[RMDB]
The record gives the reactivity of an RNA of 177 nucleotides to DMS and 2A3. The DMS profile rests on 3,993 reads.
RNA sequence: GGGAACGACUCGAGUAGAGUCGAAAAAACAGUUGCUGAUACCGAAGGCGUACCAACUGAAGUACUGUCAAAGUAUGUGUUCGAAAUGGCUAAACCAGUAAUGAAAUCACUGGUUAAAAAUAAUCGCAUCAGCGAAUGUAUUCGUACAUUCGCUGAUAAAAGAAACAACAACAACAAC
Reactivity to DMS in 0.01 (KOAc 150mM, MgCl2 10mM, bicine 150mM(pH8.5), 24C), signal-to-noise 4, nucleotides 027 to 126: a060a050c070a060g000u000u000g010c100u010g020a130u010a050c060c010g010a140a120g010g020c090g010u000a030c050c020a030a100c110u010g000a080a080g010u000a060c030u010g020u000c100a080a090a060g000u010a030u000g020u000g030u000u000c030g000a040a080a080u010g010g020c030u000a090a040a010c000c000a010g020u010a070a090u000g020a080a090a210u000c150a020c000u000g000g000u010u000a010a040a070a070a050u010a080a090u010c110g010c210
Reactivity to 2A3 in 0.01 (KOAc 150mM, MgCl2 10mM, bicine 150mM(pH8.5), 24C), signal-to-noise 2, nucleotides 027 to 126: a000a000c030a020g020u030u020g050c110u070g020a070u020a030c020c010g060a120a040g110g000c070g030u010a010c060c010a020a060c020u070g040a070a020g050u060a050c100u080g050u180c090a040a000a030g010u020a070u100g130u030g090u100u050c000g030a000a040a130u100g030g000c050u090a060a000a000c000c000a010g000u000a040a120u150g180a090a090a030u060c020a010c020u000g000g000u030u030a030a020a020a000a000u150a050a060u110c040g000c090